[RMDB]
RNA sequence: GGGAACGACUCGAGUAGAGUCGAAAAUGGUAGUCCGCCACUCUAAGGGGACGCCUUUAGAAGAAGAGGCUAGGUGGUAUUCCGUUGUGGGAUACUUGGUAAUAUGUAACGCUAAUUGCAUAAGAUUAAAACUUUGCAUACUUCGGUAUGCAAAGAAUCAAAAGUUAAAGUUCGCUUUAACUUUUGAAAAAGAAACAACAACAACAAC
Reactivity to 2A3 in 0.01 (KOAc 150mM, MgCl2 10mM, bicine 150mM(pH8.5), 24C), signal-to-noise 5, nucleotides 027 to 156: u120g030g000u030a100g030u030c030c030g060c140c000a090c030u150c050u100a120a140g000g010g000g020a020c010g050c000c000u050u060u060a110g010a150a010g020a020a020g020a030g040g000c050u070a040g050g050u030g030g010u080a030u040u020c030c030g030u050u140g060u210g070g000g020a010u010a040c000u020u040g030g000u080a090a060u040a080u090g020u020a040a030c050g000c150u070a130a100u070u070g000c020a040u030a090a060g010a120u090u250a020a070a020a090c000u010u010u000g000c000a000u000a000c000u020u020c060g080g000u000a000u000g010c000a000a000a000g000a000a040
Reactivity to DMS in 0.01 (KOAc 150mM, MgCl2 10mM, bicine 150mM(pH8.5), 24C), signal-to-noise 4, nucleotides 027 to 156: u010g010g000u010a060g020u000c000c010g020c020c010a250c060u000c060u000a070a060g000g010g010g020a110c220g000c010c030u000u000u010a030g020a080a100g020a120a070g000a150g000g020c020u000a070g020g050u000g010g010u000a030u000u000c010c000g010u000u010g030u000g020g020g010a050u000a020c020u000u000g010g010u000a060a150u000a070u000g020u000a050a090c070g010c130u000a090a140u000u000g000c020a090u000a060a170g000a180u000u000a020a060a150a120c010u010u000u000g000c020a020u000a010c000u000u010c300g060g010u000a010u000g000c000a000a000a000g000a030a090